Source information: An RNA of 177 nucleotides, treated with 2A3 and DMS and read out base by base. The 2A3 profile rests on 1,249 reads. Conditions: 150 mM KOAc, 10 mM MgCl2 and 150 mM bicine (pH 8.5), 24 C. Source: RMDB library M2PK50, as collected in RNAgym.

RNA sequence: GGGAACGACUCGAGUAGAGUCGAAAAGUUCGGGCCUUCGGGCCCGAACAAAUAAUCCAGCCUGGAUAGGCUGGAGCCUAAACUAUGGAAAAGGCACCAUAGAAACCACAUGGUUCGCCAUGUGGAACAUGAAGAAAGGGUUCGCCCUUUCUUCAUGAAAAGAAACAACAACAACAAC
Reactivity to 2A3 in 0.01 (KOAc 150mM, MgCl2 10mM, bicine 150mM(pH8.5), 24C), signal-to-noise 2, nucleotides 027 to 126: g020u000u010c010g020g060g030c010c040u070u140c300g030g000g000c050c020c010g000a000a000c000a000a000a000u020a000a000u020c000c000a010g030c000c030u130g160g230a240u220a250g000g000c000u000g010g000a010g000c000c000u100a110a110a070c000u000a010u030g000g000a020a090a210a300g150g000c080a000c030c000a020u000a010g030a080a020a000c010c010a000c010a000u010g000g060u030u020c150g100c110c000a000u010g010u010g000g000a010a010
Reactivity to DMS in 0.01 (KOAc 150mM, MgCl2 10mM, bicine 150mM(pH8.5), 24C), signal-to-noise 4, nucleotides 027 to 126: g010u000u000c000g030g010g040c000c000u000u000c210g050g020g060c010c000c000g010a000a010c010a030a080a060u010a110a170u000c010c000a010g010c000c000u000g010g040a120u010a030g010g020c010u000g000g010a010g000c010c000u000a050a060a180c010u000a000u000g010g000a080a070a100a110g000g010c190a120c000c010a000u000a020g000a230a090a190c010c000a000c010a010u000g000g010u010u010c250g000c000c020a000u010g000u000g010g010a030a090